[RMDB]
This 207-nucleotide RNA was probed chemically with DMS and 2A3.
The RNA was probed in 150 mM KOAc, 10 mM MgCl2 and 150 mM bicine (pH 8.5) at 24 C.
DMS adducts were read by reverse transcription with MarathonRT.
It was measured as part of the RMDB library OK3TST.
RNA sequence: GGGAACGACUCGAGUAGAGUCGAAAAGAGACCAGCCUGGGCAAUGUGGAAAGACUCUGUCUCUACAAAAAGCCAAAAAAUUAGCCGAGCUUGGUGGCACCCGAGCUUAGUGUCACAUGCCUGUAGUCCCAGCUACUCGGGAAGCUGAGGCAGGAGAAAUGAAAAUGGGUUUCGACCCAUUUUCAUUAAAAGAAACAACAACAACAAC
Reactivity to DMS in 0.01 (KOAc 150mM, MgCl2 10mM, bicine 150mM(pH8.5), 24C), signal-to-noise 1, nucleotides 027 to 156: g000a090g040a100c030c040a100g020c050c070u000g010g030g030c020a030a110u120g000u040g010g000a200a140a170g020a050c000u010c090u030g020u010c020u000c030u000a160c040a120a080a070a030a180g030c010c020a000a050a030a030a140a250u010u000a100g000c070c050g020a060g030c060u000u000g060g000u000g030g000c020a140c100c000c020g000a120g000c040u000u000a070g000u000g010u030c040a000c030a100u000g010c000c030u010g000u000a190g000u000c040c020c030a110g050c000u020a020c010u000c020g030g000g010a070a060g030c020u000g040a050g020g060c000a030g040g000a150g000a140
Reactivity to 2A3 in 0.01 (KOAc 150mM, MgCl2 10mM, bicine 150mM(pH8.5), 24C), signal-to-noise 1, nucleotides 027 to 156: g070a020g050a020c010c040a020g110c030c080u070g070g020g000c050a050a050u010g010u060g010g010a110a160a080g010a030c050u070c110u230g050u030c010u000c020u030a030c030a000a110a000a000a010g000c000c000a050a050a060a030a010a060u090u080a050g000c020c040g070a010g030c010u050u070g060g000u060g030g000c020a020c020c010c000g010a000g030c070u180u060a030g000u000g080u070c050a060c000a050u110g030c020c000u050g040u130a010g020u020c020c020c000a000g000c000u020a020c000u000c030g010g010g020a020a020g020c000u000g020a030g030g020c000a000g000g070a020g010a020